[RMDB]
RNA sequence: GGGAACGACUCGAGUAGAGUCGAAAAGCUACUAUGUCUGCAAAGUUUAAUCGAAUAAUUUGCCAGUGAUAUGAUGACAUUGUCACAAAGAUCACAAGGGACACAGAGUUGACUUUUGCUCAAGGUGCACUCGUAUCAACUUCGGUUGAUACGAGUGAAAAGAAACAACAACAACAAC
Reactivity to 2A3 in 0.01 (KOAc 150mM, MgCl2 10mM, bicine 150mM(pH8.5), 24C), signal-to-noise 2, nucleotides 027 to 126: g010c010u030a060c000u080a230u180g050u010c050u050g000c000a000a090a040g010u120u070u150a080a070u050c060g030a020a060u110a190a140u080u050u130g070c050c060a040g000u000g020a020u040a010u080g180a150u020g010a020c080a210u150u300g000u010c000a010c010a070a110a000g190a030u000c030a010c070a090a030g110g010g000a010c020a010c010a070g050a020g060u080u010g070a100c000u010u060u230u120g000c000u010c030a090a050g030g000u110g000
Reactivity to DMS in 0.01 (KOAc 150mM, MgCl2 10mM, bicine 150mM(pH8.5), 24C), signal-to-noise 1, nucleotides 027 to 126: g000c030u000a060c060u000a070u000g010u010c000u000g020c040a030a020a050g010u010u000u020a130a150u010c250g010a150a110u060a030a070u010u000u010g000c000c300a120g010u000g010a000u010a010u000g050a090u010g000a000c010a150u010u010g010u000c010a020c030a020a040a070g010a050u010c000a000c020a240a090g060g000g000a010c030a010c120a060g000a040g000u020u000g020a080c030u000u000u000u000g020c010u010c060a030a080g000g010u000g000
Chemical mapping of a 177-nucleotide RNA with 2A3 and DMS. DMS adducts were read by reverse transcription with MarathonRT. High DMS reactivity at an A or C suggests that its Watson-Crick edge is free. For 2A3, 815 sequencing reads were counted.